[RMDB]
RNA sequence: GGGAACGACUCGAGUAGAGUCGAAAAAGCCAUCCGCCUCCAGCGCUGUUGGCGCAAUGACGGUCACGGAGACCAGCUUAUGGGUUAUCGGCUGCCCGGUCUGCGGAUCGAUAACGUGCGAGAUGCGUAAAUUAGCACUGUUCGCAGUGCUAAUUUAAAAAGAAACAACAACAACAAC
Reactivity to DMS in 0.01 (KOAc 150mM, MgCl2 10mM, bicine 150mM(pH8.5), 24C), signal-to-noise 8, nucleotides 027 to 126: a070g010c070c020a060u000c020c030g010c020c010u020c080c060a170g020c020g010c020u010g020u010u030g010g020c020g000c030a090a070u010g010a140c040g000g000u000c020a130c060g020g010a060g000a020c020c010a170g010c150u040u040a110u050g000g000g000u010u000a100u010c080g000g000c050u010g000c010c030c030g000g000u010c040u000g000c010g000g000a030u010c010g000a080u020a080a070c180g020u020g000c020g010a100g010a060u010g000c050g020
Reactivity to 2A3 in 0.01 (KOAc 150mM, MgCl2 10mM, bicine 150mM(pH8.5), 24C), signal-to-noise 9, nucleotides 027 to 126: a000g040c020c010a030u020c020c010g010c000c010u070c050c050a060g010c010g000c030u090g150u280u240g090g000c010g000c010a020a110u160g060a070c020g000g000u020c070a040c270g030g030a030g010a020c000c000a010g120c060u270u180a200u300g040g020g030u100u080a120u150c050g080g000c070u070g020c000c010c010g010g010u020c010u070g090c010g010g000a020u010c000g010a010u040a120a080c060g020u100g050c030g020a150g000a080u040g020c010g040